[RMDB]
The data come from the RNA Mapping Database (RMDB), library OK2TST. An RNA of 177 nucleotides, treated with DMS and 2A3 and read out base by base. The DMS profile rests on 11,867 reads. Values cover nucleotides 27 to 126. DMS adducts were read by reverse transcription with MarathonRT. High DMS reactivity at an A or C suggests that its Watson-Crick edge is free.

RNA sequence: GGGAACGACUCGAGUAGAGUCGAAAAGCCACUGGUCCCCGUGACCCGACUUCUACAGUGGGGUGAUCUUCCUGUGGGGCAGGCGUUUCGGGGUCCACGAGUCCGAGGAGCCCCGGGAGCGCUAGUGUCUCUAUUGGAAUUUCGAUUCCAAUAGAGAAAAAGAAACAACAACAACAAC
Reactivity to DMS in 0.01 (KOAc 150mM, MgCl2 10mM, bicine 150mM(pH8.5), 24C), signal-to-noise 7, nucleotides 027 to 126: g010c060c010a050c060u000g000g010u000c020c010c010c140g020u000g000a040c020c010c010g000a040c020u000u000c210u000a100c170a040g020u000g010g010g010g010u000g000a070u000c100u010u010c010c020u000g010u000g010g010g010g020c070a200g000g010c030g020u000u000u000c010g020g010g010g000u000c000c000a050c030g010a290g020u010c170c040g010a090g000g010a110g000c010c000c010c010g020g010g000a020g010c020g010c010u000a040g010u000g000
Reactivity to 2A3 in 0.01 (KOAc 150mM, MgCl2 10mM, bicine 150mM(pH8.5), 24C), signal-to-noise 4, nucleotides 027 to 126: g050c020c010a030c040u060g020g050u110c010c000c000c020g060u040g080a010c000c020c020g100a040c030u220u160c100u250a090c060a110g020u040g030g030g030g000u040g080a080u050c060u110u040c020c020u040g010u100g030g000g030g000c030a050g030g000c000g000u000u030u010c010g000g000g000g010u000c000c010a020c020g030a050g220u130c190c010g030a040g040g060a180g070c010c020c000c030g020g030g000a030g020c010g000c010u020a040g040u020g030